[RMDB]
RNA sequence: GGGAACGACUCGAGUAGAGUCGAAAAGUAUCCCUAGAUGAUAAAACACCGCACAUGGCUCGUAAGAGCGGUUAAAUUAGCAAGUAAUGCAAAUUACGCGAGGUAACGCAUGGCCGAGGCUCGUUAGAAAAGGGAGAAUCCUUCGGGAUUCUCCCAACGGGUAUAAUUACUUCGGUAAUUAUACCCGAAAAGAAACAACAACAACAAC
Reactivity to 2A3 in 0.01 (KOAc 150mM, MgCl2 10mM, bicine 150mM(pH8.5), 24C), signal-to-noise 2, nucleotides 027 to 156: g060u050a090u110c020c000c000u000a060g060a140u100g030a030u160a110a050a060a000c040a000c020c010g050c010a020c000a140u100g130g000c040u040c050g030u060a040a050g010a050g110c090g030g010u010u040a030a090a070u070u090a040g070c150a200a000g020u140a090a040u090g030c040a000a020a160u090u020a020c010g030c020g050a020g070g030u040a040a000c020g000c080a100u140g050g000c070c040g000a010g000g050c020u000c020g040u020u030a070g120a030a080a000a000g000g030g000a000g000a000a000u000c010c000u020u030c220g000g000g000a000u000u000c000u000c000c000c000a000a000
Reactivity to DMS in 0.01 (KOAc 150mM, MgCl2 10mM, bicine 150mM(pH8.5), 24C), signal-to-noise 1, nucleotides 027 to 156: g010u010a060u010c010c010c020u010a170g030a140u010g020a160u010a040a160a130a110c080a070c000c020g000c020a100c030a050u010g010g010c060u010c010g000u000a160a090g010a100g000c010g040g010u000u010a040a050a050u000u010a090g030c060a120a090g010u000a070a040u000g020c120a030a100a100u000u000a050c020g030c070g020a150g010g000u010a060a010c020g000c060a050u010g060g040c040c020g000a120g010g010c050u000c000g030u000u010a110g010a080a080a100a170g010g000g010a050g000a020a000u000c000c000u000u010c190g100g050g010a010u000u000c010u000c000c000c010a020a000